RNA sequence: GGGAACGACUCGAGUAGAGUCGAAAAAGACUAGGAUCCUGUCUCUGACACAUGACAUCCAUGGUACCAGCGAUCGCACGCGUGCUAGGCUCGUACGAUGAUCCUAGGAUCGUACGCUCCAUGAGUACUAAAAUGGCAACUUCGGUUGCCAUUUUAGAAAAGAAACAACAACAACAAC
Reactivity to DMS in 0.01 (KOAc 150mM, MgCl2 10mM, bicine 150mM(pH8.5), 24C), signal-to-noise 2, nucleotides 027 to 126: a070g000a160c020u000a050g000g010a040u000c020c100u000g020u000c030u010c030u000g010a040c050a020c050a070u010g000a080c160a070u010c130c030a070u000g010g000u010a050c030c010a080g000c080g010a090u010c110g000c080a060c070g000c110g000u000g000c030u020a110g010g000c040u000c070g020u020a020c050g010a070u010g000a040u010c010c010u000a050g000g040a030u010c010g010u000a030c040g000c110u010c010c040a130u020g020a120g010u000a110
Reactivity to 2A3 in 0.01 (KOAc 150mM, MgCl2 10mM, bicine 150mM(pH8.5), 24C), signal-to-noise 1, nucleotides 027 to 126: a000g050a060c050u040a030g010g020a060u090c040c020u040g020u030c010u000c050u300g080a040c020a020c000a120u150g070a040c020a080u050c080c000a040u030g060g010u080a040c020c060a050g000c020g080a040u100c040g020c060a040c090g070c050g020u020g020c000u040a010g050g040c010u030c050g030u060a020c010g030a100u120g000a000u000c010c010u010a030g060g000a010u000c000g000u010a000c000g000c010u000c000c000a080u060g090a050g030u030a020